[RMDB]
RNA sequence: GGGAACGACUCGAGUAGAGUCGAAAAUAGGUCGUGUUCGCACGACCUAAGAUAAAAUGCAUAAAAUGCCAGUAACCCGAAACACAAGGGACUGCACCUGGCCUACGAUGUCGUUCGCGACAUCGAACACGUGAAUUUUAUUCGUAAAAUUCACGUGAAAAGAAACAACAACAACAAC
Reactivity to 2A3 in 0.01 (KOAc 150mM, MgCl2 10mM, bicine 150mM(pH8.5), 24C), signal-to-noise 7, nucleotides 027 to 126: u050a000g000g000u010c000g000u020g040u040u060c240g020c050a000c000g000a000c000c000u000a010a000g000a000u100a010a100a030a030u100g000c030a000u140a250a270a090a040u130g000c010c000a010g020u070a130a120c020c010c020g060a150a250a010c110a020c040a110a080g030g010g020a050c070u090g010c010a030c020c010u010g010g000c000c010u040a060c030g000a010u010g000u010c010g000u010u060c220g000c000g080a000c000a000u000c000g010a030a010
Reactivity to DMS in 0.01 (KOAc 150mM, MgCl2 10mM, bicine 150mM(pH8.5), 24C), signal-to-noise 7, nucleotides 027 to 126: u000a010g010g020u000c000g040u010g020u010u020c200g030c000a010c000g020a010c000c000u000a000a010g000a120u010a030a050a060a090u010g010c040a110u000a060a040a080a200u000g010c010c020a010g000u010a110a110c000c010c000g000a110a100a190c160a060c170a110a140g000g000g000a120c150u010g000c030a110c250c010u000g000g010c010c250u000a090c020g010a010u000g010u000c000g010u000u000c240g020c010g010a010c010a010u000c000g010a070a180

Notes
Chemical mapping of a 177-nucleotide RNA with 2A3 and DMS. The DMS profile rests on 7,939 reads. The data come from the RNA Mapping Database (RMDB), library M2PK50. Conditions: 150 mM KOAc, 10 mM MgCl2 and 150 mM bicine (pH 8.5), 24 C. DMS adducts were read by reverse transcription with MarathonRT. The 2A3 profile rests on 17,379 reads. 2A3 adducts were read by reverse transcription with SuperScript II with manganese.